[RMDB]
RNA sequence: GGGAACGACUCGAGUAGAGUCGAAAAGGUUAUCGCGAGCAUCUUCACAUACUCCUUCUUACGCAGCUCGUUAGCCACGGUGAGCAGAUGCUCAGGCUCGACAUCAAUGCCAGUGUAGGAGACCACGGAUUCGCCACCAAUUCGUUGGUGGCGAAUCAAAAGAAACAACAACAACAAC
Reactivity to DMS in 0.01 (KOAc 150mM, MgCl2 10mM, bicine 150mM(pH8.5), 24C), signal-to-noise 2, nucleotides 027 to 126: g000g020u010u000a040u000c060g030c050g000a060g000c030a120u000c050u000u000c020a050c120a100u010a120c110u000c030c030u020u000c090u010u000a070c130g010c080a050g010c020u000c130g000u000u010a070g030c060c030a090c160g050g000u010g000a060g000c040a130g010a080u000g000c000u000c030a080g010g020c080u000c050g000a030c050a060u000c160a070a050u000g000c000c000a090g000u020g000u020a040g030g000a060g000a120c070c040a080c270g000
Reactivity to 2A3 in 0.01 (KOAc 150mM, MgCl2 10mM, bicine 150mM(pH8.5), 24C), signal-to-noise 2, nucleotides 027 to 126: g020g020u080u070a080u120c040g020c020g020a020g030c030a020u050c010u080u140c020a030c020a070u150a070c020u020c010c000u040u000c010u030u000a020c070g010c060a010g010c000u030c100g020u040u060a020g000c050c040a070c110g000g150u090g050a020g000c050a050g080a300u280g030c030u000c010a000g000g060c030u070c060g040a050c050a080u090c090a150a040u080g000c000c000a060g050u040g030u060a020g060g040a000g030a020c020c000a000c030g090
Annotation: An RNA of 177 nucleotides, treated with DMS and 2A3 and read out base by base. The DMS profile rests on 1,021 reads.